[RMDB]
RNA sequence: GGGAACGACUCGAGUAGAGUCGAAAAAAAAAAGAUAUGGAUCGAACUACGCUCGUCAUUCUCAUCGAUCUAUGCUCGGAAACGAGCAUAGGGAGAGAAUGGCUUGGCGCGAUCCUAAGUCAAAAAACUACAAUAUGAGGUUCGCCUCAUAUUGUAGAAAAGAAACAACAACAACAAC
Reactivity to DMS in 0.01 (KOAc 150mM, MgCl2 10mM, bicine 150mM(pH8.5), 24C), signal-to-noise 4, nucleotides 027 to 126: a000a000a070a040a060a060g020a010u000a300u020g000g020a010u000c010g020a100a070c170u020a300c030g000c000u010c300g000u000c020a000u000u000c010u000c000a300u010c210g020a070u010c010u000a000u000g000c010u000c000g000g000a060a060a090c010g010a030g010c000a000u010a010g000g010g000a030g000a020g000a000a000u000g020g010c010u000u000g010g010c020g010c000g010a010u000c000c010u000a050a070g000u020c020a000a070a110a080a080a160
Reactivity to 2A3 in 0.01 (KOAc 150mM, MgCl2 10mM, bicine 150mM(pH8.5), 24C), signal-to-noise 3, nucleotides 027 to 126: a000a000a010a000a000a070g040a040u110a060u110g000g000a000u020c010g000a090a080c120u200a050c300g000c020u040c050g010u020c000a000u040u010c010u010c010a300u300c050g020a020u040c010u020a000u010g000c010u000c010g030g020a060a110a110c020g000a010g000c000a000u000a000g010g030g000a020g000a010g020a000a000u000g000g010c020u030u200g020g010c020g000c000g030a010u000c000c000u040a220a020g030u020c070a050a000a010a030a090a190